[RMDB]
RNA sequence: GGGAACGACUCGAGUAGAGUCGAAAAGAUAUGGAAAUAUCUAUGCGUCAUCGAUCUCGGAAACGAGGGAGACGACAUAGAGUAUUUCCUAAGUCAAAACUGAUGUGUGGUUCGCCACACAUCAGAAGUCACAAAGGGAGUUCGCUCCCUUUGUGACAAAAGAAACAACAACAACAAC
Reactivity to 2A3 in 0.01 (KOAc 150mM, MgCl2 10mM, bicine 150mM(pH8.5), 24C), signal-to-noise 1, nucleotides 027 to 126: g040a020u060a060u080g000g000a020a010a010u010a000u020c000u020a000u000g000c040g040u000c010a300u300c040g080a100u000c000u000c020g020g100a120a110a110c020g030a010g000g020g000a020g000a000c000g060a090c000a000u000a000g020a030g060u020a020u000u000u010c000c000u010a130a030g080u030c020a000a010a140a190c000u020g000a010u010g010u000g020u010g020g070u060u110c250g080c100c000a000c060a010c000a030u020c000a000g020a000a000
Reactivity to DMS in 0.01 (KOAc 150mM, MgCl2 10mM, bicine 150mM(pH8.5), 24C), signal-to-noise 1, nucleotides 027 to 126: g020a060u010a300u000g000g000a000a010a010u020a040u000c000u010a010u000g010c040g010u000c010a240u000c090g010a140u030c010u000c000g020g000a140a070a220c000g000a000g000g010g000a210g000a010c020g000a120c000a010u010a020g000a050g010u000a010u000u000u010c000c000u000a030a060g000u030c000a090a050a090a110c000u000g000a000u010g020u000g000u000g010g000u000u000c260g000c000c010a010c000a000c000a000u000c000a000g010a020a080